[RMDB]
RNA sequence: GGGAACGACUCGAGUAGAGUCGAAAAAAAAGAGCGCAUCCCUCACACCGUUUUAAACGCUAAGCAACACACUAAAGAAGCUGAAAUCAUCAAAGACGCUGGGCUUAAGGGGGCGGUUACGAUUGCGUGUGAUAGAUAAAUUCGUUUAUCUAUCACAAAAAGAAACAACAACAACAAC
Reactivity to 2A3 in 0.01 (KOAc 150mM, MgCl2 10mM, bicine 150mM(pH8.5), 24C), signal-to-noise 5, nucleotides 027 to 126: a000a010a000a020g100a010g010c040g000c020a030u030c010c010c000u030c000a040c000a000c000c020g010u000u020u040u130a140a170a010c050g010c070u030a020a020g020c010a030a090c040a000c010a020c110u160a140a070a060g070a080a020g020c040u020g050a060a040a030u090c050a020u040c050a060a080a060g020a020c040g000c040u040g010g030g020c010u060u060a040a030g030g000g010g020g020c010g010g010u030u040a030c070g040a080u060u140g040c020g010
Reactivity to DMS in 0.01 (KOAc 150mM, MgCl2 10mM, bicine 150mM(pH8.5), 24C), signal-to-noise 9, nucleotides 027 to 126: a060a040a070a100g010a110g020c050g010c020a070u000c020c010c010u010c120a110c100a060c090c020g010u000u010u010u010a030a080a100c110g000c060u010a060a070g010c030a060a060c070a070c110a060c100u000a040a080a070g010a090a080g020c040u000g000a050a060a080u010c090a060u010c130a060a080a070g000a070c090g010c060u000g000g020g010c050u000u000a060a050g010g010g010g010g010c050g010g000u000u000a080c100g010a070u000u010g010c080g020